[RMDB]
RNA sequence: GGGAACGACUCGAGUAGAGUCGAAAAGGAGCUUGAUUCGUCAAGCUCCAAAAGUUACAGACCCGAUUCCUAGGGUAAACAAGAAGCAAUGCACCGAGGCAAAAAGGAAUGGAUUCGUCCAUUCCAAUCAAUAAAUUCGCUUCGGCGAAUUUAUUGAAAAAGAAACAACAACAACAAC
Reactivity to DMS in 0.01 (KOAc 150mM, MgCl2 10mM, bicine 150mM(pH8.5), 24C), signal-to-noise 2, nucleotides 027 to 126: g020g020a030g000c000u000u000g000a010u000u000c210g030u020c000a000a000g000c010u020c000c010a010a010a070a110g010u010u020a090c150a160g010a070c010c000c020g000a220u000u000c010c010u000a160g010g000g020u000a080a040a080c080a140a050g010a060a080g040c090a040a070u000g010c050a050c100c020g010a060g000g000c060a020a020a100a070a120g010g010a010a000u000g010g000a020u000u010c160g000u000c000c000a000u000u000c000c000a030a050

Chemical mapping of a 177-nucleotide RNA with DMS. The reactions ran in a buffer of 150 mM KOAc, 10 mM MgCl2 and 150 mM bicine (pH 8.5), at 24 C. It was measured as part of the RMDB library M2PK50. For DMS the reverse transcriptase was MarathonRT.